Structure probing data (DMS and 2A3) for a 177-nucleotide construct. For DMS the reverse transcriptase was MarathonRT. The reactions ran in a buffer of 150 mM KOAc, 10 mM MgCl2 and 150 mM bicine (pH 8.5), at 24 C. For DMS, 854 sequencing reads were counted. It was measured as part of the RMDB library TTRDES.

RNA sequence: GGGAACGACUCGAGUAGAGUCGAAAAAAAAAAGAUAUGGACCAUAUCACAGCCAUCCAGCGAAGAACUUAGCUCGGAAACGAGCUAAGGGAGCUGAGUGGUCACAGUAUGGUCCUAAGUCAAAAAAGAUGUAUUCUGAGUUCGCUCAGAAUACAUCAAAAGAAACAACAACAACAAC
Reactivity to DMS in 0.01 (KOAc 150mM, MgCl2 10mM, bicine 150mM(pH8.5), 24C), signal-to-noise 1, nucleotides 027 to 126: a000a060a120a130a130a080g000a060u000a240u000g000g000a000c000c000a020u020a000u000c010a300c300a300g000c030c000a000u000c070c000a050g000c020g000a020a080g000a140a070c060u010u010a030g000c000u000c000g000g030a090a090a070c000g000a010g020c000u000a000a000g020g000g000a060g020c000u000g020a000g100u000g020g000u000c030a110c180a300g000u000a000u000g000g020u000c000c000u020a000a120g000u000c020a000a090a040a160a030a060
Reactivity to 2A3 in 0.01 (KOAc 150mM, MgCl2 10mM, bicine 150mM(pH8.5), 24C), signal-to-noise 1, nucleotides 027 to 126: a000a000a000a000a000a000g070a020u130a080u110g000g000a000c010c000a020u020a010u130c060a030c070a070g000c040c000a020u130c010c000a020g020c000g300a300a070g000a040a000c000u000u000a010g010c000u000c000g060g000a010a090a070c020g000a000g000c000u000a000a000g000g010g000a000g000c000u000g020a000g020u000g030g050u040c000a000c000a030g010u000a000u020g010g000u030c000c000u000a000a030g010u050c020a000a020a110a090a000a170